Overview: The record gives the reactivity of an RNA of 177 nucleotides to 2A3 and DMS. It was measured as part of the RMDB library OK2TST. Conditions: 150 mM KOAc, 10 mM MgCl2 and 150 mM bicine (pH 8.5), 24 C. For 2A3 the reverse transcriptase was SuperScript II with manganese. The DMS profile rests on 8,986 reads. For DMS the reverse transcriptase was MarathonRT.
RNA sequence: GGGAACGACUCGAGUAGAGUCGAAAAGAACUUUCAUGGGAUACAAAAGGUGAGCAAGUCGGCCCUUUAUCGGACGAAACUGGCCGUACCGUUAUAGUUCAGUUUUGCCGUAGUCUCAUUAGAGGAAGGUAAAUUUAGGAUUCGUCCUAAAUUUACCAAAAGAAACAACAACAACAAC
Reactivity to 2A3 in 0.01 (KOAc 150mM, MgCl2 10mM, bicine 150mM(pH8.5), 24C), signal-to-noise 4, nucleotides 027 to 126: g010a020a040c000u000u020u030c010a010u020g000g000g040a020u030a100c060a030a140a010a020g070g020u120g050a130g090c040a110a080g130u150c080g110g030c010c000c000u000u030u020a090u060c010g030g050a080c020g040a020a010a010c010u010g020g010c000c020g020u040a080c050c020g040u050u080a130u090a110g020u000u120c010a010g010u000u010u030u030g000c000c010g020u030a050g050u010c000u000c010a010u010u040a010g020a010g090g040a120a080
Reactivity to DMS in 0.01 (KOAc 150mM, MgCl2 10mM, bicine 150mM(pH8.5), 24C), signal-to-noise 6, nucleotides 027 to 126: g020a170a170c030u000u000u000c050a040u000g010g000g000a050u000a110c150a090a030a050a030g000g020u010g010a130g020c070a090a120g020u010c160g010g010c060c020c030u000u000u000a070u010c040g020g000a120c030g000a010a010a020c020u000g000g000c030c030g020u010a040c230c170g020u000u010a060u010a060g000u000u010c020a020g000u000u000u000u000g010c030c020g020u000a080g010u000c000u000c010a040u000u000a060g000a030g000g010a100a120